[RMDB]
An RNA of 177 nucleotides, treated with DMS and 2A3 and read out base by base.
The DMS profile rests on 2,200 reads.
Values cover nucleotides 27 to 126.
Source: RMDB library RFM100, as collected in RNAgym.
The 2A3 profile rests on 1,404 reads.
For 2A3 the reverse transcriptase was SuperScript II with manganese.
For DMS the reverse transcriptase was MarathonRT.

RNA sequence: GGGAACGACUCGAGUAGAGUCGAAAAGUAUAGCUAAAUUUUUGUAUAUUGUCCGUGCAAUUUUUUCCGGUAUUGCAGUUACAUUGGCGAAGUCUGCCCAAAAAACUGUAUAACUAGAAAAAAUGAGUGAAGUAAAAAAGUUCGCUUUUUUACUUCAAAAAGAAACAACAACAACAAC
Reactivity to DMS in 0.01 (KOAc 150mM, MgCl2 10mM, bicine 150mM(pH8.5), 24C), signal-to-noise 2, nucleotides 027 to 126: g030u000a040u000a090g010c050u030a050a100a190u020u020u020u020u040g000u000a030u020a060u000u000g000u000c030c020g020u030g010c070a100a010u000u000u000u000u000u000c000c060g000g040u000a090u000u000g000c000a000g000u000u020a090c220a150u010u000g020g000c050g030a170a130g030u030c130u010g010c120c020c010a000a030a170a060a030a000c010u010g000u010a020u000a110a030c010u010a080g000a000a000a000a050a000a020u000g000a070g010
Reactivity to 2A3 in 0.01 (KOAc 150mM, MgCl2 10mM, bicine 150mM(pH8.5), 24C), signal-to-noise 3, nucleotides 027 to 126: g030u020a020u070a110g080c040u100a120a130a300u170u160u050u140u100g040u010a080u000a010u060u070g060u050c020c050g040u110g060c040a080a020u000u000u010u010u010u000c020c010g000g000u020a100u060u040g000c000a020g000u000u000a020c050a150u030u030g000g000c010g010a160a010g150u040c130u120g030c020c000c050a020a050a020a020a000a000c010u000g000u010a030u040a120a010c010u020a010g000a000a010a010a010a000a000u020g000a010g070